Description
This 177-nucleotide RNA was probed chemically with DMS and 2A3. For DMS, 1,686 sequencing reads were counted.
[RMDB]
RNA sequence: GGGAACGACUCGAGUAGAGUCGAAAACACACAAGGUUCGCCUUGUGUGCAAGAAUAGACGAAUACUACCGUAGAAGUAUUCAGGUCACAUAACUACGCAAAUGGCGUUCUGCUUCGGCAGAACGAAUUGCCAUUGGGAAUUCGUUCCCAAUGGCAAAAAAGAAACAACAACAACAAC
Reactivity to DMS in 0.01 (KOAc 150mM, MgCl2 10mM, bicine 150mM(pH8.5), 24C), signal-to-noise 2, nucleotides 027 to 126: c000a000c000a010c000a010a010g000g050u000u000c250g040c000c000u000u000g000u010g020u010g020c080a100a050g010a110a120u010a100g000a040c070g000a020a000u000a010c000u000a040c110c230g000u000a030g020a120a040g010u000a000u000u000c030a050g020g030u000c070a080c150a110u000a060a060c070u010a040c080g040c300a020a070a050u010g030g000c000g020u000u000c000u000g000c000u000u030c160g020g010c000a000g000a020a000c000g000a030a030
Reactivity to 2A3 in 0.01 (KOAc 150mM, MgCl2 10mM, bicine 150mM(pH8.5), 24C), signal-to-noise 2, nucleotides 027 to 126: c010a000c000a000c000a000a010g000g000u020u070c120g140c030c000u010u010g010u000g000u020g010c000a010a060g060a050a120u120a110g040a000c010g000a020a000u030a020c040u030a070c030c010g070u100a050g010a170a000g000u000a030u030u030c030a030g140g160u050c030a060c020a090u160a160a030c030u030a030c050g020c130a010a050a130u160g150g000c020g000u000u000c000u000g030c020u000u040c170g110g000c010a030g000a010a000c000g010a000a020
Reactivities are given for positions 27 through 126.